[RMDB]
Source: RMDB library M2PK90, as collected in RNAgym. Chemical mapping of a 177-nucleotide RNA with DMS and 2A3. For DMS, 1,876 sequencing reads were counted.
RNA sequence: GGGAACGACUCGAGUAGAGUCGAAAAUCAUUGGCUUCGCUGCGCGCUGCGUUGCCUAGGCUUCAGAUGCUUCGUACUGUUGCCAACGUUGCAAUUUCCAAACGCUAAUGCGAUAGUGUGCAAACAACCUUUCCUAUCGGUUCGCCGAUAGGAAAGGAAAAGAAACAACAACAACAAC
Reactivity to DMS in 0.01 (KOAc 150mM, MgCl2 10mM, bicine 150mM(pH8.5), 24C), signal-to-noise 3, nucleotides 027 to 126: u020c090a090u010u000g000g000c000u000u000c030g010c020u000g040c020g010c070g020c040u010g010c050g020u000u000g020c010c020u020a130g000g010c030u010u000c040a030g010a200u000g020c080u020u000c080g000u000a100c040u000g010u000u000g030c000c010a060a110c180g030u000u000g030c100a090a120u000u010u000c020c020a080a070a140c040g000c030u010a060a080u000g010c040g040a080u010a040g000u010g010u000g000c050a150a060a100c120a060a080
Reactivity to 2A3 in 0.01 (KOAc 150mM, MgCl2 10mM, bicine 150mM(pH8.5), 24C), signal-to-noise 3, nucleotides 027 to 126: u100c030a020u020u170g000g000c010u020u010c000g010c030u070g010c020g000c020g000c040u020g000c000g030u000u020g000c000c000u030a060g010g000c000u020u000c010a030g030a170u100g080c050u110u120c080g070u070a060c020u020g030u040u000g020c020c010a050a030c090g050u060u080g000c010a070a090u000u030u030c010c000a060a020a070c020g000c060u170a200a040u220g000c010g000a020u010a030g010u040g010u020g000c000a020a050a030c040a020a060